Chemical mapping of a 207-nucleotide RNA with DMS and 2A3. It was measured as part of the RMDB library RNAMAK. The 2A3 profile rests on 4,980 reads. The RNA was probed in 150 mM KOAc, 10 mM MgCl2 and 150 mM bicine (pH 8.5) at 24 C.

[RMDB]
RNA sequence: GGGAACGACUCGAGUAGAGUCGAAAAGCGCCCUUCGGGGCGCACUCUUGCGUACUACCUGACGAAACUCGAGGAUCUAUCCGUAACAUCUAUCCCAAAUAGGAUAGUGGGAUAGGGAGAGUAGUCAGGUAUCGCCAUUGACACCCUUCGGGGUGAAGCUACGUUAUAAAUUCGUUUAUAACGUAGCAAAAGAAACAACAACAACAAC
Reactivity to DMS in 0.01 (KOAc 150mM, MgCl2 10mM, bicine 150mM(pH8.5), 24C), signal-to-noise 2, nucleotides 027 to 156: g000c010g030c010c010c010u000u000c300g080g010g010g000c010g010c010a010c020u000c020u010u030g030c000g000u000a160c100u010a010c010c000u010g010a010c010g000a240a160a080c010u000c010g010a120g000g000a060u010c010u000a010u010c010c010g000u010a080a090c130a060u010c000u000a000u000c000c000c020a020a130a200u000a060g000g000a020u000a010g030u010g010g000g000a030u000a000g010g000g000a080g000a040g020u000a130g000u000c010a030g010g010u010a000u000c050g060c000c080a130u000u000g000a300c000a010c010c000c000u000u000c270g050g010g020g050u020g000a050a100
Reactivity to 2A3 in 0.01 (KOAc 150mM, MgCl2 10mM, bicine 150mM(pH8.5), 24C), signal-to-noise 3, nucleotides 027 to 156: g000c000g000c000c010c000u010u050c230g030g000g000g000c010g000c000a020c010u010c000u010u060g010c010g030u050a140c040u010a000c030c010u000g000a000c020g090a280a230a120c010u020c010g030a280g030g010a010u000c000u000a000u000c000c000g030u070a050a040c020a120u120c010u000a000u010c030c010c020a200a300a160u230a090g010g000a010u000a000g000u020g000g000g020a000u000a000g000g010g000a020g000a000g000u100a040g000u000c000a000g000g000u000a000u000c000g010c000c020a040u050u170g060a030c000a020c010c000c000u010u080c230g050g000g000g000u010g030a030a000